[RMDB]
RNA sequence: GGGAACGACUCGAGUAGAGUCGAAAACUGCCUUAAGUAAGUGGUGUUGACGUUUGGGUCCUACGCAACGAGACCCCGUGAACCUUGUCAGGUCCGGAAGGAAGCAGCAAUAAGCGGGUUCUCUCGUUAUGACGAUGCAUUUCGAUGCAUCGUCAUAAAAAGAAACAACAACAACAAC
Reactivity to DMS in 0.01 (KOAc 150mM, MgCl2 10mM, bicine 150mM(pH8.5), 24C), signal-to-noise 2, nucleotides 027 to 126: c050u060g020c000c030u000u010a200a100g100u020a010a060g090u000g000g000u000g000u020u010g030a040c110g000u000u000u000g000g050g000u000c010c010u010a060c120g000c170a070a040c030g010a020g010a020c100c000c000c060g000u010g000a140a220c280c190u010u000g040u000c010a300g010g000u000c000c000g010g050a140a220g000g060a010a010g000c050a240g000c010a000a070u000a050a260g050c050g000g000g000u060u070c300u020c010u000c030g000u000